[RMDB]
RNA sequence: GGGAACGACUCGAGUAGAGUCGAAAAUAAGUUGGGUCAAAUCGAAAUCGAAUCUCAGUGCGAUUUGGAGCAUGUGCGCAAUAUGCUCAACACCAAGUUCGAGGAAUCCAUCUCCUAUCCAAAGGUACAUUUACCACGCAUUCGUGCGUGGUAAAUGAAAAGAAACAACAACAACAAC
Reactivity to DMS in 0.01 (KOAc 150mM, MgCl2 10mM, bicine 150mM(pH8.5), 24C), signal-to-noise 3, nucleotides 027 to 126: u000a040a090g000u000u000g030g020g010u000c070a070a130a110u000c110g010a090a140a070u000c060g010a060a030u000c060u000c090a120g020u000g030c060g000a130u010u000u010g000g020a010g010c020a020u000g000u000g000c300g020c200a080a030u010a010u000g000c010u000c010a080a080c030a060c070c050a070a090g010u000u000c010g000a050g000g000a030a080u020c030c030a050u010c040u000c020c010u000a040u030c050c060a070a050a050g010g030u020a130
Reactivity to 2A3 in 0.01 (KOAc 150mM, MgCl2 10mM, bicine 150mM(pH8.5), 24C), signal-to-noise 2, nucleotides 027 to 126: u280a080a030g030u020u010g000g000g020u060c040a020a000a100u020c060g060a020a000a010u070c040g030a050a030u060c080u050c130a110g090u070g090c070g070a070u060u000u160g090g000a000g000c000a010u030g010u050g030c100g000c170a040a060u010a000u040g030c000u000c020a030a010c020a040c030c050a070a030g020u010u020c010g000a020g020g030a080a020u000c000c010a020u000c050u000c030c000u130a130u100c040c030a080a080a010g070g010u070a060